[RMDB]
RNA sequence: GGGAACGACUCGAGUAGAGUCGAAAACUUCGGGGGAAGACUGACUUCCUGGCUGCGUGACCUGGAGCUCUGAGCUUCAGUUUUCUCACUUGUAGAGUAACAUACACAGAGUUCACCCUACAGGGUCAGUGCCAUCACUAUUCGUAGUGAUGGCACUAAAAGAAACAACAACAACAAC
Reactivity to 2A3 in 0.01 (KOAc 150mM, MgCl2 10mM, bicine 150mM(pH8.5), 24C), signal-to-noise 1, nucleotides 027 to 126: c020u180u110c030g030g040g000g020g000a020a030g050a060c120u150g030a070c000u050u040c010c000u020g050g010c000u040g010c000g110u030g030a070c000c000u010g010g030a000g000c020u010c200u180g160a070g000c050u040u020c000a010g020u010u030u000u000c020u020c010a040c050u020u030g010u020a000g000a010g010u020a020a010c020a020u140a070c160a010c040a120g120a020g120u050u000c050a010c000c000c000u000a000c000a030g010g000g030u030c040
Reactivity to DMS in 0.01 (KOAc 150mM, MgCl2 10mM, bicine 150mM(pH8.5), 24C), signal-to-noise 2, nucleotides 027 to 126: c040u000u020c040g020g000g000g010g000a070a070g020a300c150u010g010a140c060u010u000c020c020u000g030g010c030u010g020c300g000u000g000a090c220c040u000g000g000a000g000c000u020c220u000g010a090g020c030u000u000c050a020g000u000u000u000u000c030u000c040a140c070u000u010g020u000a050g000a020g020u000a010a050c030a090u010a110c230a140c300a120g010a050g000u000u000c130a030c040c010c030u010a000c030a120g010g000g000u000c150
This 177-nucleotide RNA was probed chemically with 2A3 and DMS. 2A3 adducts were read by reverse transcription with SuperScript II with manganese. The DMS profile rests on 1,265 reads. The reactions ran in a buffer of 150 mM KOAc, 10 mM MgCl2 and 150 mM bicine (pH 8.5), at 24 C. For DMS the reverse transcriptase was MarathonRT.